[RMDB]
RNA sequence: GGGAACGACUCGAGUAGAGUCGAAAAUUCAGGGCGAUCAUAGCCUGGCCGCGCAGGCCUUCCAUUUCUGCCUCGCUGAUGGCGAUCUUGGCGGAGCGGAUUUGAUCGUUGAUCUGGGAUUUGGUCAAUCAGGUGCACAUUUCGAUGUGCACCUGAUAAAAGAAACAACAACAACAAC
Reactivity to DMS in 0.01 (KOAc 150mM, MgCl2 10mM, bicine 150mM(pH8.5), 24C), signal-to-noise 2, nucleotides 027 to 126: u000u000c010a070g000g010g000c000g000a040u000c060a070u010a090g000c060c030u010g010g000c030c120g010c210g000c130a120g000g000c000c290u000u010c000c010a050u010u000u000c000u000g010c020c010u000c020g010c020u000g000a120u020g010g010c040g010a050u010c190u020u010g010g020c010g000g000a040g020c110g010g000a070u000u000u010g000a020u010c030g010u000u000g000a100u010c010u000g000g000g000a040u010u010u000g010g020u010c090a150
Reactivity to 2A3 in 0.01 (KOAc 150mM, MgCl2 10mM, bicine 150mM(pH8.5), 24C), signal-to-noise 1, nucleotides 027 to 126: u010u030c010a070g000g000g000c010g070a040u020c050a050u110a040g000c010c020u000g000g020c090c030g060c030g060c090a020g020g040c000c030u030u040c000c000a020u080u140u000c010u040g040c000c010u010c020g000c010u160g150a160u280g060g080c040g010a040u000c060u150u150g000g000c000g000g010a000g010c050g050g030a090u050u080u080g000a020u020c010g020u000u070g050a140u040c000u000g000g090g040a010u080u000u070g120g020u000c020a010